[RMDB]
The record gives the reactivity of an RNA of 177 nucleotides to 2A3 and DMS.

RNA sequence: GGGAACGACUCGAGUAGAGUCGAAAAGCAAUCACCAAUGCACAAGCAGAAUUACAGAACGAAUAUCACCUUACUCACUCUAGGAACAUAUUGCAAUGGGUGAUGAAACUGUUCCGUGUGAAGAACACGGUGCUAAUUACUUCGGUAAUUAGCACCGAAAAGAAACAACAACAACAAC
Reactivity to 2A3 in 0.01 (KOAc 150mM, MgCl2 10mM, bicine 150mM(pH8.5), 24C), signal-to-noise 3, nucleotides 027 to 126: g040c060a010a040u080c010a040c060c000a030a040u080g040c030a040c060a080a060g000c010a010g080a090a080u120u110a070c020a050g090a150a020c030g050a110a020u060a020u120c020a040c010c030u060u110a060c010u050c040a030c030u070c060u080a030g030g070a090a010c020a100u120a090u090u260g050c020a070a100u100g060g000g030u020g010a010u030g020a080a100a000c060u040g020u020u000c000c060g030u030g000u010g060a090a120g050a050a010c050a000
Reactivity to DMS in 0.01 (KOAc 150mM, MgCl2 10mM, bicine 150mM(pH8.5), 24C), signal-to-noise 3, nucleotides 027 to 126: g020c060a130a040u010c040a050c060c030a050a130u000g020c010a090c140a080a080g020c030a040g010a100a110u020u010a090c060a040g010a090a110c060g020a060a060u000a090u000c050a050c030c030u000u000a140c070u000c070a060c040u000c040u010a120g000g010a040a050c090a050u000a120u000u000g020c100a040a120u010g010g000g010u000g020a020u000g020a030a030a080c150u000g010u000u000c000c020g030u000g020u000g000a060a150g010a090a030c150a110